[RMDB]
RNA sequence: GGGAACGACUCGAGUAGAGUCGAAAAGAUAUGGAGCGUCAGAGAAGUACUCGGAAACGAGUAUACUUCGACGAAGACGGUUCCUAAGUCAAACGUCAAUCUAGAACUUCGGUUCUAGAUUGACGAACACUCCACUGAUCUUCGGAUCAGUGGAGUGAAAAGAAACAACAACAACAAC
Reactivity to 2A3 in 0.01 (KOAc 150mM, MgCl2 10mM, bicine 150mM(pH8.5), 24C), signal-to-noise 2, nucleotides 027 to 126: g060a020u060a050u190g030g000a040g030c010g000u030c040a020g030a000g000a050a000g010u000a010c010u000c000g010g010a030a030a040c020g010a010g000u050a050u040a020c010u020u010c000g250a300c020g000a030a060g000a010c030g090g070u190u050c000c000u020a140a030g060u010c080a140a120a100c010g000u000c020a000a000u000c000u000a010g000a000a010c000u040u110c300g170g010u000u000c000u000a000g010a000u000u000g000a000c010g000a000a000
Reactivity to DMS in 0.01 (KOAc 150mM, MgCl2 10mM, bicine 150mM(pH8.5), 24C), signal-to-noise 2, nucleotides 027 to 126: g000a030u000a270u000g000g000a030g010c000g000u000c010a020g010a140g010a010a010g020u000a020c000u000c000g000g010a060a070a190c000g010a000g000u000a030u010a010c000u000u000c000g010a150c270g000a100a150g010a010c030g020g000u020u010c010c000u000a050a110g000u000c050a110a150a300c020g000u010c000a000a000u000c000u000a020g000a010a010c000u000u010c220g020g000u000u000c000u000a000g000a000u000u000g000a010c000g000a050a060
Record summary
An RNA of 177 nucleotides, treated with 2A3 and DMS and read out base by base. For DMS, 1,795 sequencing reads were counted. High 2A3 reactivity points to a flexible backbone, as in loops and unpaired stretches. For 2A3 the reverse transcriptase was SuperScript II with manganese. The RNA was probed in 150 mM KOAc, 10 mM MgCl2 and 150 mM bicine (pH 8.5) at 24 C.